[RMDB]
RNA sequence: GGGAACGACUCGAGUAGAGUCGAAAAACAGUCCUAGGCAUCGGCGGUGUCGAAGCAAUGGCGUAGACCUCAGGCACCGAGCAUGUAUAUCGGAGCAAGCUUGGCUAGACAGAGCUAGAGAAGUGGGGUAAUGAGAUGGGUUCGCCCAUCUCAUUACAAAAGAAACAACAACAACAAC
Reactivity to DMS in 0.01 (KOAc 150mM, MgCl2 10mM, bicine 150mM(pH8.5), 24C), signal-to-noise 2, nucleotides 027 to 126: a100c220a160g000u000c010c020u010a100g010g000c010a000u000c100g030g000c050g010g020u000g030u010c030g030a160a100g000c020a100a050u000g000g000c040g030u000a100g000a120c020c020u000c070a040g000g020c030a070c000c000g000a080g000c120a030u030g000u010a080u000a070u010c120g030g010a090g020c070a080a090g010c050u000u010g000g010c020u000a040g000a100c060a080g010a080g020c050u000a080g020a070g010a050a050g010u020g030g000g000
Reactivity to 2A3 in 0.01 (KOAc 150mM, MgCl2 10mM, bicine 150mM(pH8.5), 24C), signal-to-noise 1, nucleotides 027 to 126: a020c030a000g000u010c000c040u060a090g090g020c030a030u010c060g080g020c030g000g050u030g030u050c030g000a020a020g050c000a010a070u300g020g000c060g130u050a060g070a150c000c020u070c070a020g000g080c000a000c000c010g000a020g030c070a040u170g100u110a070u020a030u290c100g080g000a020g100c020a000a040g010c020u080u080g020g040c000u000a010g010a000c070a040g090a000g000c020u050a030g010a000g020a150a040g030u040g020g080g000